Chemical mapping of a 177-nucleotide RNA with 2A3 and DMS. The RNA was probed in 150 mM KOAc, 10 mM MgCl2 and 150 mM bicine (pH 8.5) at 24 C. The data come from the RNA Mapping Database (RMDB), library OK2TST. As a SHAPE reagent, 2A3 marks flexible, mostly unpaired nucleotides at the ribose 2'-OH.
[RMDB]
RNA sequence: GGGAACGACUCGAGUAGAGUCGAAAACGACCAUUCAUAGCGUGUCUCCGAGAGCAACGCCACGCGAUCGCCUUGUUCCACACCGGACUGGAUCAGCCCUUUUGCCACCUCAAAGACCUCUUCAACGUAUGACGAGUACGUUCGCGUACUCGUCAUAAAAAGAAACAACAACAACAAC
Reactivity to 2A3 in 0.01 (KOAc 150mM, MgCl2 10mM, bicine 150mM(pH8.5), 24C), signal-to-noise 1, nucleotides 027 to 126: c030g080a000c030c030a050u040u110c030a030u160a090g000c000g070u010g100u000c030u000c080c070g140a090g010a000g090c050a110a010c050g000c000c000a060c050g000c030g070a080u050c000g020c030c000u060u070g010u060u000c010c000a040c000a010c000c060g040g030a070c050u040g010g060a040u080c000a050g000c000c000c000u010u020u030u120g000c020c020a040c050c000u010c050a020a090a000g080a070c020c050u010c040u080u010c040a110a060c060g070
Reactivity to DMS in 0.01 (KOAc 150mM, MgCl2 10mM, bicine 150mM(pH8.5), 24C), signal-to-noise 2, nucleotides 027 to 126: c160g000a180c030c050a100u020u010c100a090u000a090g060c090g020u000g010u000c030u000c090c060g000a120g020a120g010c060a070a060c050g010c050c040a030c070g000c040g000a090u000c080g020c050c020u000u020g020u000u000c020c030a070c100a070c090c060g000g000a080c040u000g010g000a070u000c050a090g000c010c020c030u010u000u000u000g000c040c040a080c060c020u000c050a080a090a110g020a070c060c020u000c030u000u000c040a060a140c240g000